[RMDB]
RNA sequence: GGGAACGACUCGAGUAGAGUCGAAAACGCUGGGCACGAGAGUAGGGGAGAGCAUACUGAAGCGCGCACGGUAUCGCUCGAGGAUCCGAUGGUAGUGCCUGUGCUGAAGCGCGCACGGCAACCGAAAGGUGCGAGAUAGACCAUUUCGAUGGUCUAAACAGAGAAAGUAAUUCGUUACUUUCUCUGUAAAAGAAACAACAACAACAAC
Reactivity to 2A3 in 0.01 (KOAc 150mM, MgCl2 10mM, bicine 150mM(pH8.5), 24C), signal-to-noise 6, nucleotides 027 to 156: c070g000c020u040g010g010g020c010a000c020g090a070g010a020g150u260a070g020g000g000g000a010g000a000g000c010a000u000a010c000u030g060a260a060g030c030g000c010g000c040a020c020g010g000u010a010u040c160g000c010u010c000g040a220g000g020a000u010c010c010g060a100u170g170g030u000a020g000u000g000c000c000u010g000u020g000c020u080g030a080a020g010c020g000c000g000c020a010c010g070g000c040a100a120c020c010g030a090a040a050g040g000u020g010c030g000a040g020a030u100a010g000a000c000c000a010u070u100u090c240g090a030u010g000g000u000c000u010a010a010
Reactivity to DMS in 0.01 (KOAc 150mM, MgCl2 10mM, bicine 150mM(pH8.5), 24C), signal-to-noise 4, nucleotides 027 to 156: c070g020c030u010g020g020g020c030a050c010g000a300g010a170g040u000a240g000g000g010g010a090g010a040g030c030a060u000a030c020u000g000a050a070g010c020g030c020g020c000a300c020g010g010u010a010u000c180g030c010u000c010g000a100g050g010a060u000c020c000g000a150u030g030g020u010a100g020u010g020c010c010u000g010u000g010c040u010g000a090a080g020c060g000c030g000c010a080c020g000g000c030a130a110c000c010g000a090a120a170g010g020u000g000c020g010a090g000a260u000a030g000a040c000c000a030u000u000u010c240g010a060u000g010g010u000c000u000a010a080